Chemical mapping of a 177-nucleotide RNA with DMS. It was measured as part of the RMDB library OK2TRN. Reactivities are given for positions 27 through 126.

RNA sequence: GGGAACGACUCGAGUAGAGUCGAAAAAUUGACCCAGGCCAUGGGGGCAUUGGUUGGCCUCCUCUGUAAGGUAGGCGUGGGGCUCAGCCUGCAAGAGCUGACCAUACUUAUGUAGGAUUAGGGGGCAUGGCCCCCUGGGAUUCGUCCCAGGGGGCCAAAAAGAAACAACAACAACAAC
Reactivity to DMS in 0.01 (KOAc 150mM, MgCl2 10mM, bicine 150mM(pH8.5), 24C), signal-to-noise 1, nucleotides 027 to 126: a090u020u010g000a210c040c000c010a140g010g000c050c080a080u000g020g000g000g010g040c070a080u020u010g010g010u000u000g010g000c020c000u010c010c000u010c050u000g030u000a150a120g010g010u000a040g010g010c060g010u000g000g010g000g010c050u000c020a120g000c020c050u010g000c120a100a130g000a060g000c020u010g000a140c020c010a030u000a050c030u000u000a040u010g010u010a140g000g000a130u010u010a100g000g010g000g000g020c060a110